[RMDB]
RNA sequence: GGGAACGACUCGAGUAGAGUCGAAAAGUCGCCCCCCGGAGGUGAUCCCUCCCUCCUGCCGGCCCGCCAGCCUGACCUGUGCUUGGCUCCGCGGGCCGCAGCCUCGGCCCCGGCGCGCCCCCGGCUGCAUUACUUCCAGUUUCGACUGGAAGUAAUGAAAAGAAACAACAACAACAAC
Reactivity to 2A3 in 0.01 (KOAc 150mM, MgCl2 10mM, bicine 150mM(pH8.5), 24C), signal-to-noise 6, nucleotides 027 to 126: g040u020c010g050c000c000c000c000c000c000g020g010a010g010g020u060g030a090u030c010c010c010u010c010c000c000u010c010c010u030g080c070c020g000g000c000c000c000g010c000c010a010g010c000c010u060g090a120c010c050u140g060u160g090c060u080u080g010g000c000u020c040c040g000c000g000g000g000c000c000g000c000a000g010c000c010u040c020g020g010c000c000c010c010g020g000c000g010c010g010c000c000c000c000c010g030g000c020u040g010
Reactivity to DMS in 0.01 (KOAc 150mM, MgCl2 10mM, bicine 150mM(pH8.5), 24C), signal-to-noise 6, nucleotides 027 to 126: g010u000c050g000c030c000c020c060c040c060g010g000a060g000g010u010g000a110u010c030c000c010u000c020c010c040u000c050c010u010g010c090c040g010g010c010c010c010g010c010c300a040g000c010c000u000g010a080c060c090u010g020u040g010c080u010u020g000g010c010u010c120c240g000c020g020g020g020c010c020g010c020a040g010c090c020u000c080g000g010c020c020c020c040g000g010c040g010c040g000c010c010c010c010c010g010g010c050u020g020